[RMDB]
RNA sequence: GGGAACGACUCGAGUAGAGUCGAAAAUGCGAGAAGGGGACGAAGGAGGAAGACUAAGUUAUCACUUAAUGGGAAAAUUUAGACAUGCUACUGCACAGUACAGUGACUGCAGAGAGUGAUGAUAUACCGUCCAGUGUUCAUUCGUGAACACUGGACGAAAAGAAACAACAACAACAAC
Reactivity to 2A3 in 0.01 (KOAc 150mM, MgCl2 10mM, bicine 150mM(pH8.5), 24C), signal-to-noise 1, nucleotides 027 to 126: u070g030c040g020a040g010a070a070g010g000g030g000a020c030g010a010a020g040g000a020g010g000a060a000g010a010c020u020a150a000g020u030u100a110u060c000a000c040u010u090a080a010u080g010g060g000a050a040a140a090u170u140u050a030g020a000c050a030u120g030c050u040a060c040u020g070c090a080c000a060g080u150a040c010a060g060u050g050a010c030u010g000c070a000g050a000g030a000g010u000g060a010u000g010a000u040a000u030a160c020
Reactivity to DMS in 0.01 (KOAc 150mM, MgCl2 10mM, bicine 150mM(pH8.5), 24C), signal-to-noise 1, nucleotides 027 to 126: u000g030c060g010a040g020a050a160g020g000g000g020a050c050g010a150a030g010g000a120g020g000a090a090g010a050c130u000a070a180g010u000u000a030u020c040a030c010u010u010a080a180u010g020g000g020a020a090a050a040u000u010u000a100g000a120c040a050u020g030c070u000a040c040u000g000c040a000c110a040g000u000a060c070a060g000u010g000a080c080u010g010c050a020g010a160g000a040g030u000g000a020u000g000a080u010a040u010a090c260